The record gives the reactivity of an RNA of 177 nucleotides to 2A3 and DMS. DMS adducts were read by reverse transcription with MarathonRT. The 2A3 profile rests on 897 reads. For 2A3 the reverse transcriptase was SuperScript II with manganese. The data come from the RNA Mapping Database (RMDB), library OK2TST.
RNA sequence: GGGAACGACUCGAGUAGAGUCGAAAAAGGUGGAAUUGAAGGGCUGUGUCAAAAGGCUUGGACAAUGAUAUCUAUCGCUGUGAUAAUUCUAUCUGCCACAGAGUCUGGCACACGAGUAAUGAGUAUGGAUAUCAGCGUCUUUCGAGACGCUGAUAUCAAAAGAAACAACAACAACAAC
Reactivity to 2A3 in 0.01 (KOAc 150mM, MgCl2 10mM, bicine 150mM(pH8.5), 24C), signal-to-noise 1, nucleotides 027 to 126: a000g030g010u020g020g000a080a090u030u130g010a060a040g090g060g000c030u000g010u020g040u130c030a000a000a000a110g020g000c050u050u090g030g000a000c020a080a040u060g030a020u070a010u000c040u050a050u040c070g000c100u070g070u050g100a070u010a100a040u040u010c000u010a160u020c010u030g010c000c000a010c020a040g150a010g030u000c050u000g080g040c000a010c000a010c060g050a010g030u040a040a060u150g000a020g070u100a110u120g050
Reactivity to DMS in 0.01 (KOAc 150mM, MgCl2 10mM, bicine 150mM(pH8.5), 24C), signal-to-noise 2, nucleotides 027 to 126: a040g010g000u000g010g010a070a110u000u000g010a100a120g000g010g020c040u000g020u010g020u000c100a040a060a160a090g000g000c010u000u000g020g010a090c070a050a090u000g000a050u000a040u010c080u010a040u010c070g020c130u000g030u020g010a090u000a050a070u000u000c060u000a070u010c070u000g000c020c050a060c100a150g020a040g010u000c060u000g020g000c010a040c090a080c160g000a110g000u000a020a060u000g000a100g010u000a070u010g010